[RMDB]
RNA sequence: GGGAACGACUCGAGUAGAGUCGAAAAGUGUGUUCGAGAGUACGAACGUGUACACACUCGAGAGAGUACGAGUGUGUGUUCGUGUUCACGAUCUCGUUCGAGUGUGAUCUCGAUCACGAACACUCGAGUGAUCUCUCUCGAACUCGUACUCGUUCGAGCGACAAGUACCGUUCGCGGUACUUGUCGCAAAAGAAACAACAACAACAAC
Reactivity to 2A3 in 0.01 (KOAc 150mM, MgCl2 10mM, bicine 150mM(pH8.5), 24C), signal-to-noise 1, nucleotides 027 to 156: g130u130g000u050g000u110u000c030g070a030g030a080g280u090a030c030g000a110a000c010g010u000g030u000a020c070a000c000a000c030u000c000g000a000g000a010g000a050g000u020a090c050g010a030g010u050g010u050g010u030g010u150u030c030g000u000g000u090u050c000a000c010g070a010u070c070u030c000g130u300u150c210g010a020g040u110g000u000g010a030u050c000u000c010g000a000u000c040a000c010g060a110a040c010a000c000u040c020g000a070g050u050g190a190u030c020u000c000u010c000u000c010g000a000a000c000u070c150g010u020a000c010u000c000g000u010u000c000g010a000
Description:
This 207-nucleotide RNA was probed chemically with 2A3. Values are in units of 0.01, from 0 to 300, in steps of 10.